Chemical mapping of a 170-nucleotide RNA with 2A3 and DMS. Values cover nucleotides 27 to 129. 2A3 adducts were read by reverse transcription with SuperScript II with manganese. For DMS, 11,158 sequencing reads were counted.
RNA sequence: GGGAACGACUCGAGUAGAGUCGAAAAGGACCUCAGGGGGCCCAUGGAGCCGUGGGAAUCCCCAGACCUCCCUUCUCCACACUCCUUCCCCCCUGCGGGGCCCCCCCAUAAGAUGGCGAGAUCUCCAAUACAGAAGCGUUCGCGCUUCUGAAAAGAAACAACAACAACAAC
Reactivity to 2A3 in 0.01 (KOAc 150mM, MgCl2 10mM, bicine 150mM(pH8.5), 24C), signal-to-noise 2, nucleotides 027 to 129: g010g010a010c010c020u020c050a030g000g000g020g000g010c020c000c000a000u020g050g040a050g050c090c000g070u020g000g020g040a010a060u120c030c000c010c000a010g030a020c010c010u000c000c000c000u020u040c040u000c020c010a020c000a000c020u000c010c000u030u130c000c000c000c000c000c000u050g010c050g030g000g000g040c050c020c010c000c000c030c010a040u070a070a040g070a060u060g040g000c030g030a030g010a120u020c030u000c030c040a040a020u120a100
Reactivity to DMS in 0.01 (KOAc 150mM, MgCl2 10mM, bicine 150mM(pH8.5), 24C), signal-to-noise 5, nucleotides 027 to 129: g040g000a160c090c060u040c060a080g050g020g010g000g040c000c070c170a100u010g040g020a120g020c120c050g020u010g000g000g030a060a080u050c040c020c020c060a000g030a180c000c000u000c030c040c010u060u030c030u030c000c040a050c080a160c110u030c030c030u030u000c110c000c020c010c000c050u040g010c090g010g040g020g030c010c030c040c050c020c030c000a090u050a050a080g010a080u000g060g000c000g020a090g010a060u030c030u000c060c070a090a130u010a130